[RMDB]
RNA sequence: GGGAACGACUCGAGUAGAGUCGAAAAGUCGUCAAUGGCAGGCGAGCACGGGUAUUGGCGACAGGAGUCUGCGAAGGGCUGGGAUGUCUGGACUGAUUGGCACUACUCCUGCUUGAAUGGCCAUGAGGACUAUUACGGGCUUCGGCCCGUAAUAGUCAAAAGAAACAACAACAACAAC
Reactivity to 2A3 in 0.01 (KOAc 150mM, MgCl2 10mM, bicine 150mM(pH8.5), 24C), signal-to-noise 3, nucleotides 027 to 126: g040u030c060g040u080c040a020a090u040g040g030c000a000g060g070c040g020a030g010c070a020c060g010g000g040u050a050u030u070g040g030c020g000a010c000a000g000g070a030g060u050c060u100g070c110g010a080a050g000g010g000c040u040g010g030g010a140u170g060u110c040u080g080g060a090c000u000g050a250u030u050g010g020c000a020c050u020a000c060u020c010c000u030g000c000u040u040g050a080a060u070g110g030c000c010a020u080g060a070g120
Reactivity to DMS in 0.01 (KOAc 150mM, MgCl2 10mM, bicine 150mM(pH8.5), 24C), signal-to-noise 2, nucleotides 027 to 126: g050u020c030g000u020c050a060a050u000g020g000c030a130g000g020c050g020a040g000c020a030c300g000g000g000u020a000u010u010g000g000c010g020a000c030a110g000g010a080g010u020c080u060g000c080g040a150a080g010g000g000c020u000g010g030g000a090u010g010u020c020u020g000g000a140c010u000g000a130u000u010g020g050c030a030c100u010a060c010u000c000c030u000g000c000u000u010g000a050a050u020g000g030c030c000a010u000g020a080g010